[RMDB]
RNA sequence: GGGAACGACUCGAGUAGAGUCGAAAAGUGCUCAUAUAGAAAUUUAUUCCGGGGAAAUAGUUGCCCUGACGUGGCUUUGGGGAAAUAAUUUCUCCAGGGUAAUUAUUUCUCUAGCUGCGUAUGGCUACAUAAUUACUGAUUUCGAUCAGUAAUUAUGAAAAGAAACAACAACAACAAC
Reactivity to 2A3 in 0.01 (KOAc 150mM, MgCl2 10mM, bicine 150mM(pH8.5), 24C), signal-to-noise 2, nucleotides 027 to 126: g060u020g020c000u020c110a000u110a010u120a230g160a130a300a130u220u300u160a060u200u110c030c010g000g000g030g040a000a040a100u070a130g080u000u100g000c000c010c000u040g050a030c030g030u070g100g010c000u210u190u160g010g000g000g020a000a000a030u080a040a060u050u030u000c010u000c010c000a040g110g020g000u000a000a000u000u020a030u000u000u000c000u000c000u030a000g000c000u020g010c010g000u020a030u080g060g000c020u060a060
Reactivity to DMS in 0.01 (KOAc 150mM, MgCl2 10mM, bicine 150mM(pH8.5), 24C), signal-to-noise 3, nucleotides 027 to 126: g000u000g010c040u010c050a080u000a140u010a140g000a090a120a130u020u010u010a090u020u010c030c040g020g010g010g000a060a040a030u000a030g010u000u000g000c010c010c060u000g010a050c060g020u000g010g000c050u010u000u000g010g000g010g000a020a020a150u010a060a080u000u000u000c000u000c040c120a060g000g000g020u000a000a010u000u000a000u000u000u000c000u000c010u000a040g020c070u000g010c060g020u000a020u000g000g010c020u000a190